Notes: Structure probing data (DMS and 2A3) for a 177-nucleotide construct. Source: RMDB library OK1LIB, as collected in RNAgym. The RNA was probed in 150 mM KOAc, 10 mM MgCl2 and 150 mM bicine (pH 8.5) at 24 C. 2A3 adducts were read by reverse transcription with SuperScript II with manganese. Reactivities are given for positions 27 through 126.

RNA sequence: GGGAACGACUCGAGUAGAGUCGAAAACCCUGAUCCUCCAGUCGCUCAAAGAGGCUGGUCUCAAGGAAGACGCCAUCACGCCGGCCUUCCUGCCGCCUGCGGAGGCGACGCUCGCCUUGACGAACGGAUGAUCCCACUACUUCGGUAGUGGGAUCAUAAAAGAAACAACAACAACAAC
Reactivity to DMS in 0.01 (KOAc 150mM, MgCl2 10mM, bicine 150mM(pH8.5), 24C), signal-to-noise 2, nucleotides 027 to 126: c000c000c000u030g000a160u010c020c020u050c080c080a170g020u000c000g010c040u050c030a060a170a060g020a060g000g030c030u000g010g000u010c080u020c110a040a010g010g030a060a010g000a160c170g000c040c000a210u040c090a140c070g050c090c040g060g000c000c020u000u000c020c010u000g030c000c000g010c010c000u050g000c070g020g030a120g030g000c000g000a100c060g030c070u000c080g020c010c000u020u000g010a090c140g010a090a040c060g000g000
Reactivity to 2A3 in 0.01 (KOAc 150mM, MgCl2 10mM, bicine 150mM(pH8.5), 24C), signal-to-noise 3, nucleotides 027 to 126: c010c000c000u000g040a050u030c000c040u020c030c020a050g020u040c010g010c030u240c150a070a070a060g060a000g000g000c020u050g020g000u030c030u000c040a060a010g010g000a000a030g010a000c100g060c020c010a200u120c040a050c180g050c080c020g030g000c020c010u070u100c000c000u000g000c020c030g000c020c000u090g120c040g070g020a030g000g010c000g000a020c020g000c030u020c010g020c020c070u040u100g020a070c070g010a070a010c020g070g030